[RMDB]
RNA sequence: GGGAACGACUCGAGUAGAGUCGAAAAAAAAAAAGAUAUGGACGUCCCUCUUGCAUCGAUCUAAGUCUGAUCGGAAACGAUCAGAGCUUAGGGAGCAAACGUGAGGGACGUCCUAAGUCAAAAAAAAGCUUAUUAUACUGUUCGCAGUAUAAUAAGCAAAAGAAACAACAACAACAAC
Reactivity to DMS in 0.01 (KOAc 150mM, MgCl2 10mM, bicine 150mM(pH8.5), 24C), signal-to-noise 2, nucleotides 027 to 126: a000a000a070a090a050a130a090g000a050u000a300u000g010g010a010c020g020u000c000c000c010u000c000u010u010g000c010a300u010c200g000a040u010c010u010a000a000g020u000c000u000g000a030u000c000g040g000a110a120a120c030g030a000u010c000a010g000a040g020c000u000u000a000g000g010g000a070g020c040a020a050a120c260g030u030g020a020g020g010g000a010c000g000u000c000c000u000a020a030g000u010c020a000a000a000a100a030a070a200a090